[RMDB]
RNA sequence: GGGAACGACUCGAGUAGAGUCGAAAACGUGCCGAAAUAUGGGAUGUAUUCCGGCACGAUAAGAAGGGAUUAUUUACGUCGCUGACGCAGACUCAUCAACACAGCAGCAAAACCAAACAAUGCCGUCUGGUUACAGCUGAUUCGUCAGCUGUAACCAAAAAGAAACAACAACAACAAC
Reactivity to 2A3 in 0.01 (KOAc 150mM, MgCl2 10mM, bicine 150mM(pH8.5), 24C), signal-to-noise 2, nucleotides 027 to 126: c000g000u000g000c040c000g010a000a000a000u070a020u050g270g110g100a100u300g050u030a000u000u010c000c000g020g000c010a010c020g020a080u060a000a040g130a010a050g070g000g040a010u060u100a090u130u270u090a120c060g030u060c050g000c200u050g030a020c000g000c030a000g000a060c040u050c090a060u070c000a060a050c040a000c020a140g000c000a000g050c000a030a050a030a040c030c050a080a000a030c030a000a090u100g050c010c030g090u070c050
Reactivity to DMS in 0.01 (KOAc 150mM, MgCl2 10mM, bicine 150mM(pH8.5), 24C), signal-to-noise 2, nucleotides 027 to 126: c030g040u000g010c000c010g010a030a020a000u000a000u000g010g000g010a110u000g020u000a010u000u000c030c000g010g020c000a000c030g030a030u000a060a090g020a100a070g010g010g000a140u000u010a060u000u000u000a070c110g020u000c090g040c060u000g000a060c080g000c150a080g010a070c120u000c040a030u000c040a120a040c090a100c080a030g020c040a050g000c070a040a080a080a080c040c040a080a030a060c100a070a170u000g000c060c040g040u000c070